[RMDB]
RNA sequence: GGGAACGACUCGAGUAGAGUCGAAAAGACGAUCACACUAAUAUCAGAAAGGCUUUCUGUUGUGAUUACAGGACAUCCAGGAGGUUUAAGCGGAAAGUACGUAGACGGCCAGACGUACUCAAAGGAAAUUACGCAGGCAUUUCGAUGCCUGCGUAAUAAAAGAAACAACAACAACAAC
Reactivity to 2A3 in 0.01 (KOAc 150mM, MgCl2 10mM, bicine 150mM(pH8.5), 24C), signal-to-noise 1, nucleotides 027 to 126: g000a000c000g000a000u000c000a010c000a000c060u260a200a000u180a080u180c020a080g030a090a010a000g070g150c000u000u130u070c000u000g000u180u000g000u050g010a060u070u070a000c000a000g050g040a000c000a000u030c010c000a000g000g000a000g120g000u030u120u300a080a030g110c000g000g000a040a040a040g000u000a000c080g000u000a000g000a160c000g000g010c060c000a000g020a000c050g000u000a000c000u000c010a110a120a010g140g000a000a180
Reactivity to DMS in 0.01 (KOAc 150mM, MgCl2 10mM, bicine 150mM(pH8.5), 24C), signal-to-noise 1, nucleotides 027 to 126: g000a150c180g010a030u020c000a050c040a010c270u010a160a100u040a020u000c150a000g000a060a050a190g000g000c230u030u000u000c000u000g000u000u040g000u030g010a050u000u000a040c120a120g000g000a070c070a020u000c040c040a250g000g000a130g000g000u000u120u020a080a040g000c020g040g000a220a030a000g000u000a000c000g000u010a030g000a060c010g000g000c020c010a050g000a000c000g000u000a000c060u030c050a090a040a070g020g000a060a090